[RMDB]
RNA sequence: GGGAACGACUCGAGUAGAGUCGAAAAGCGGACGAUGAUCUCGGAGUGUCCCAAGCGGAUCACAUCACCGUCGGCCAACUGCCACUCCUGUACCGGUGCAUUGUUAACAGUGGUGCCGUUGGUGGAGAGGAGCCAUGGGGUUCGCCCCAUGGCUCCUAAAAGAAACAACAACAACAAC
Reactivity to 2A3 in 0.01 (KOAc 150mM, MgCl2 10mM, bicine 150mM(pH8.5), 24C), signal-to-noise 1, nucleotides 027 to 126: g070c070g030g060a000c000g090a040u180g060a000u000c070u040c040g230g000a190g000u210g060u000c010c000c010a000a000g040c030g010g010a000u030c000a000c020a080u000c110a010c000c000g100u100c000g120g000c000c000a180a030c010u000g000c040c020a030c000u140c000c000u020g080u110a020c110c080g010g010u020g090c000a150u130u060g070u130u170a140a000c000a010g060u150g100g100u130g050c010c010g060u050u000g010g030u170g010g000a090g000

An RNA of 177 nucleotides, treated with 2A3 and read out base by base. As a SHAPE reagent, 2A3 marks flexible, mostly unpaired nucleotides at the ribose 2'-OH. Reactivities are given for positions 27 through 126. Source: RMDB library OK1LIB, as collected in RNAgym. Reactivities are rounded to 0.1 and cut off at 0 and 3. 2A3 adducts were read by reverse transcription with SuperScript II with manganese.